[RMDB]
RNA sequence: GGGAACGACUCGAGUAGAGUCGAAAAGACACAGAAAGGAUCCAGCUCAGGGGAAGCCCAUCCACAGGAGUGAUUCCUGCUUUGGAUUUAGGUCCUAGGGGUGAGAUCACAUCCCUGCUCCAUUUCUGGAGCAGAAAGGGAGCUAGUGCAGCAAGGAAUGACUCAAAAUAUUCGUAUUUUGAGUCAUAAAAGAAACAACAACAACAAC
Reactivity to DMS in 0.01 (KOAc 150mM, MgCl2 10mM, bicine 150mM(pH8.5), 24C), signal-to-noise 2, nucleotides 027 to 156: g000a180c070a070c040a120g030a080a110a060g000g010a070u000c070c010a230g020c020u010c010a120g010g020g040g010a080a140g030c050c030c030a100u000c000c070a030c020a020g010g010a080g010u000g030a220u000u000c010c000u010g030c040u020u000u010g010g030a030u000u000u000a020g010g000u000c030c020u030a050g020g000g000g020u000g000a130g000a140u010c120a090c040a140u000c000c010c030u000g010c020u000c000c000a130u030u010u000c140u000g000g010a040g030c020a000g010a030a040a040g000g020g010a070g030c050u000a060g020u000g010c030a110g040c020a090a100g010g010a110
Reactivity to 2A3 in 0.01 (KOAc 150mM, MgCl2 10mM, bicine 150mM(pH8.5), 24C), signal-to-noise 3, nucleotides 027 to 156: g040a000c030a000c030a040g110a080a140a010g070g000a010u010c020c020a050g020c060u020c060a030g000g060g010g030a040a050g020c010c000c000a010u000c000c000a010c000a010g000g040a030g030u190g090a110u190u120c000c000u050g050c090u110u060u090g000g000a010u060u050u130a040g000g020u170c010c020u060a070g000g020g000g000u040g010a100g030a040u050c030a010c000a100u040c000c010c000u010g000c000u000c000c010a110u060u290u160c160u190g040g030a020g010c010a000g000a030a000a000g030g000g010a010g020c020u040a010g020u030g060c030a030g000c030a090a030g070g090a150